[RMDB]
RNA sequence: GGGAACGACUCGAGUAGAGUCGAAAAUAAGUCUCUUUGCUACUUUAAUGACUUUUUCUGGUAAUGUAGAUCUUGAUGCGUUAGCUAGUGAUAUUUUUGACACUCCUAGCGUACUUCAAGCUACUCUCCUUAUACUCAGGUUCGCCUGAGUAUAAGGAAAAGAAACAACAACAACAAC
Reactivity to 2A3 in 0.01 (KOAc 150mM, MgCl2 10mM, bicine 150mM(pH8.5), 24C), signal-to-noise 5, nucleotides 027 to 126: u110a010a000g020u010c010u020c000u090u100u070g050c040u050a120c030u120u160u180a100a060u170g050a050c000u060u060u040u030u030c030u050g130g010u170a140a110u130g010u000a010g010a070u060c000u000u010g000a000u010g000c000g010u000u000a000g020c080u010a010g010u000g040a080u020a140u170u160u060u120u120g030a010c000a000c000u010c000c000u000a000g000c000g010u010a020c010u020u000c010a010a000g010c010u000a010c000u000c000u000
Reactivity to DMS in 0.01 (KOAc 150mM, MgCl2 10mM, bicine 150mM(pH8.5), 24C), signal-to-noise 2, nucleotides 027 to 126: u010a040a050g010u000c010u020c090u000u000u000g030c100u000a050c070u000u010u000a150a040u000g000a070c050u000u000u000u000u000c030u020g010g000u000a060a080u000g010u020a010g000a120u000c000u000u000g000a010u000g020c030g010u010u000a010g000c100u000a030g020u010g020a100u010a060u000u000u000u020u000g020a160c040a010c000u000c300c000u000a010g010c010g000u000a000c130u000u000c010a020a000g010c020u000a000c020u010c100u000

Source: RMDB library 15KREP, as collected in RNAgym. Structure probing data (2A3 and DMS) for a 177-nucleotide construct. The RNA was probed in 150 mM KOAc, 10 mM MgCl2 and 150 mM bicine (pH 8.5) at 24 C. For 2A3, 6,430 sequencing reads were counted.